[RMDB]
RNA sequence: GGGAACGACUCGAGUAGAGUCGAAAAUGAAAUAGCGUAAUCGACAUUGAGAAUGUACGCUAAGUGUGUGUUGUAUGGGUAAGGUCCAAUUGAAGACACACACAGUUGGACCUAAUGUCGAAAAAAACCUGAUACAAGUGUUCGCACUUGUAUCAGGAAAAGAAACAACAACAACAAC
Reactivity to DMS in 0.01 (KOAc 150mM, MgCl2 10mM, bicine 150mM(pH8.5), 24C), signal-to-noise 1, nucleotides 027 to 126: u000g000a010a080a170u010a010g030c020g000u000a030a070u000c010g020a050c010a020u000u000g010a110g000a140a100u000g010u000a010c000g000c010u000a010a120g050u000g080u010g000u000g000u000u000g010u000a040u000g000g000g010u010a030a070g000g030u030c010c020a010a090u000u020g000a080a100g000a000c070a020c060a040c050a080c000a040g000u010u010g000g010a090c010c010u000a020a040u000g030u000c030g020a060a000a060a190a000a070a100
Reactivity to 2A3 in 0.01 (KOAc 150mM, MgCl2 10mM, bicine 150mM(pH8.5), 24C), signal-to-noise 1, nucleotides 027 to 126: u120g020a020a000a060u040a040g030c020g000u020a000a040u060c030g020a010c030a050u030u130g030a050g020a220a090u160g030u050a000c030g000c000u010a090a100g060u030g000u000g000u010g000u060u000g070u080a210u090g020g000g000u050a040a090g100g100u060c000c000a020a020u000u050g090a150a020g070a000c010a010c000a000c000a000c000a020g030u070u090g020g020a000c000c000u000a000a020u050g040u030c000g060a020a010a030a030a010a000a010